[RMDB]
RNA sequence: GGGAACGACUCGAGUAGAGUCGAAAAGCCCGCUGGACGCUGUUACUGUCACUCACGGCCUUCUUCGGUGGCACGUUGGUGACAUUACCGCUAAUGCUGAUGCGGUUGAGCCACUGGCGUUGGGCGACGGCAUUAGGCAGUUCGCUGCCUAAUGCCGAAAAGAAACAACAACAACAAC
Reactivity to DMS in 0.01 (KOAc 150mM, MgCl2 10mM, bicine 150mM(pH8.5), 24C), signal-to-noise 2, nucleotides 027 to 126: g020c030c010c020g020c070u000g020g000a070c020g010c040u000g000u010u010a070c160u000g030u000c000a010c010u000c280a030c000g010g000c010c010u010u020c040u000u010c150g020g010u000g020g000c000a080c020g040u000u000g010g010u000g000a000c010a040u000u010a050c010c000g030c010u010a100a090u010g040c230u020g010a160u000g010c000g000g020u000u000g000a110g000c050c130a130c080u000g020g010c010g010u000u010g020g000g010c000g010a130
Reactivity to 2A3 in 0.01 (KOAc 150mM, MgCl2 10mM, bicine 150mM(pH8.5), 24C), signal-to-noise 2, nucleotides 027 to 126: g040c000c010c000g060c030u060g080g000a010c000g000c050u020g050u180u180a050c040u050g000u020c000a010c030u030c010a000c010g000g000c000c020u190u180c020u080u080c300g180g020u120g000g020c020a060c230g000u010u020g030g010u000g020a000c010a000u000u030a010c010c000g000c030u050a100a120u300g150c130u160g070a110u150g000c020g000g000u030u100g020a030g070c050c050a050c090u090g000g020c060g000u070u050g030g010g010c030g010a020